Structure probing data (2A3) for a 207-nucleotide construct. The data come from the RNA Mapping Database (RMDB), library M2RFPK. 2A3 adducts were read by reverse transcription with SuperScript II with manganese. The 2A3 profile rests on 1,414 reads. The RNA was probed in 150 mM KOAc, 10 mM MgCl2 and 150 mM bicine (pH 8.5) at 24 C.
RNA sequence: GGGAACGACUCGAGUAGAGUCGAAAAGAAAGAAAGAACCCUUCCCGCGGGGCUGGAUCUUCCAGAUGGUGCGGGCCGGGACAAGCCGGAGAGUGUCCCGGUUUCAGAAACAACCUUCGGCAGCCAGACUAGACUACCCACUUCGGUGGGUAGUCAACCUAUUAACUGCGUUCGCGCAGUUAAUAGGAAAAGAAACAACAACAACAAC
Reactivity to 2A3 in 0.01 (KOAc 150mM, MgCl2 10mM, bicine 150mM(pH8.5), 24C), signal-to-noise 1, nucleotides 027 to 156: g010a000a010a000g020a000a090a010g040a160a190c000c000c010u000u000c000c000c000g000c010g010g010g000g000c010u010g000g010a100u160c090u200u000c190c010a020g000a010u020g030g080u030g000c000g010g000g000c010c010g000g000g000a000c000a010a000g000c000c000g000g010a000g010a000g030u000g000u000c020c000c000g000g000u000u040u000c010a000g010a000a010a020c050a020a010c010c000u000u000c000g020g000c000a010g050c070c070a030g040a170c070u210a030g000a000c000u010a010c000c010c000a000c000u020u050c160g070g000u000g000g000g010u000a000g000u000c000a000a000